Structure probing data (DMS and 2A3) for a 177-nucleotide construct. The RNA was probed in 150 mM KOAc, 10 mM MgCl2 and 150 mM bicine (pH 8.5) at 24 C. It was measured as part of the RMDB library OK1LIB. The 2A3 profile rests on 4,982 reads. High DMS reactivity at an A or C suggests that its Watson-Crick edge is free. For DMS the reverse transcriptase was MarathonRT.

[RMDB]
RNA sequence: GGGAACGACUCGAGUAGAGUCGAAAAAGCAACAGCGAUGACUUCAGCGCUCUGGUCAUCAAAGCGGAUGGUCACGUGGUAGCGGGUAAAACGCCACUGUACGAGAUCAAGAGCAAAUAAUCGCUUCAGUACCUAGUGGGUUCGCCCACUAGGUACUAAAAGAAACAACAACAACAAC
Reactivity to DMS in 0.01 (KOAc 150mM, MgCl2 10mM, bicine 150mM(pH8.5), 24C), signal-to-noise 2, nucleotides 027 to 126: a080g000c120a100a110c210a010g040c010g000a000u000g040a140c110u020u030c150a160g010c060g010c040u010c000u010g000g000u000c070a060u020c050a030a130a130g080c050g010g010a130u000g010g010u020c100a030c010g000u010g010g010u010a020g010c000g080g000g020u040a010a030a160a170c090g000c010c010a020c010u010g010u010a050c260g030a100g000a010u000c050a050a040g000a000g000c000a010a030a030u050a140a100u000c010g000c010u000u010c040
Reactivity to 2A3 in 0.01 (KOAc 150mM, MgCl2 10mM, bicine 150mM(pH8.5), 24C), signal-to-noise 6, nucleotides 027 to 126: a000g100c090a030a080c030a040g010c000g050a040u030g010a050c040u130u120c190a030g060c020g000c040u000c010u010g010g000u020c020a100u010c040a300a070a010g060c030g070g040a180u030g010g040u060c060a020c130g020u060g040g120u110a080g060c040g010g000g040u160a060a060a010a030c050g020c000c010a020c020u020g050u090a020c080g010a000g000a040u010c080a160a040g010a000g050c000a000a000a060u140a020a010u080c020g000c000u060u070c060
The DMS profile rests on 2,247 reads.